An RNA of 207 nucleotides, treated with 2A3 and DMS and read out base by base. For 2A3 the reverse transcriptase was SuperScript II with manganese. The RNA was probed in 150 mM KOAc, 10 mM MgCl2 and 150 mM bicine (pH 8.5) at 24 C.

RNA sequence: GGGAACGACUCGAGUAGAGUCGAAAAAAGUAAGACUGUAAAUUAAUACACUCUGUUAAACUAUUAACAAUACAUAUUGAAAUCAGACAUGUGCCUACCUCCUAGAUAUACUUUAGGGAAACUAAUGCUUAUGUAUAUAAAUAUGCACACAAGAGAAAUAAUAAUGGCUAUUCGUAGCCAUUAUUAUAAAAGAAACAACAACAACAAC
Reactivity to 2A3 in 0.01 (KOAc 150mM, MgCl2 10mM, bicine 150mM(pH8.5), 24C), signal-to-noise 1, nucleotides 027 to 156: a000a000g120u110a110a020g060a060c020u050g020u080a000a030a120u130u200a110a040u240a150c000a000c030u020c000u000g030u060u040a050a100a060c030u060a090u230u130a170a000c030a050a100u110a090c000a000u180a000u140u140g030a070a070a000u080c000a000g050a040c010a020u080g040u020g070c010c050u030a090c000c000u070c010c000u000a010g030a010u040a020u030a180c040u050u050u030a010g000g050g040a150a000a000c020u030a080a050u170g050c000u010u040a020u150g000u000a070u030a000u030a050a160a060u090a070u220g080c030a020c000a000c030a110a100g060a000g010a190a160
Reactivity to DMS in 0.01 (KOAc 150mM, MgCl2 10mM, bicine 150mM(pH8.5), 24C), signal-to-noise 1, nucleotides 027 to 156: a030a060g020u000a100a080g000a080c030u000g000u000a050a100a130u000u020a140a150u010a040c070a040c020u010c090u000g010u000u000a080a090a160c060u000a100u010u010a040a080c030a080a170u000a090c030a070u000a040u000u030g010a070a060a100u000c050a030g000a080c020a040u010g020u000g040c010c030u000a100c030c030u010c050c030u000a050g040a060u000a080u020a120c070u000u000u000a020g000g020g010a210a080a120c010u000a090a040u000g020c000u000u000a020u000g000u000a090u000a120u010a120a060a100u000a120u000g000c020a050c040a000c070a060a090g000a160g000a120a160